Structure probing data (DMS and 2A3) for a 177-nucleotide construct.
For 2A3 the reverse transcriptase was SuperScript II with manganese.
For DMS, 1,180 sequencing reads were counted.
In probing experiments dimethyl sulfate is read out at A N1 and C N3, which are open when not base-paired.
RNA sequence: GGGAACGACUCGAGUAGAGUCGAAAAGCGCAGGACAAAGAUUGCAUCCAGUGUGCAACAUCAAACUUAAUGGAAGAUUGGGGAGCAACAGGACUUCCGCUGAAACCGGCGAAUCUCCUGUUUGAUGUGCGCUCCAAAAUUUCGAUUUUGGAGCGCAAAAAGAAACAACAACAACAAC
Reactivity to DMS in 0.01 (KOAc 150mM, MgCl2 10mM, bicine 150mM(pH8.5), 24C), signal-to-noise 1, nucleotides 027 to 126: g030c020g000c000a030g030g000a130c110a070a030a210g040a210u000u000g030c000a030u000c080c200a080g000u000g000u000g030c070a030a010c020a080u040c070a090a040a000c070u000u090a040a130u010g060g000a040a050g000a220u010u010g070g000g010g030a090g000c130a090a060c030a100g000g000a040c230u000u000c030c040g030c000u000g000a040a220a190c200c010g000g030c000g000a000a040u010c250u000c000c020u000g010u030u000u000g000a030u060g000
Reactivity to 2A3 in 0.01 (KOAc 150mM, MgCl2 10mM, bicine 150mM(pH8.5), 24C), signal-to-noise 2, nucleotides 027 to 126: g000c060g010c000a000g000g080a010c090a020a170a100g230a200u000u180g000c000a070u040c010c140a110g040u100g040u080g170c020a030a040c010a020u020c020a010a000a000c000u090u260a040a000u280g060g010a180a000g040a040u000u130g010g000g010g000a020g050c040a050a170c010a110g000g040a020c010u030u050c070c020g000c010u000g070a160a240a300c080c090g000g000c050g030a010a010u080c020u000c000c000u010g030u160u050u040g050a010u050g040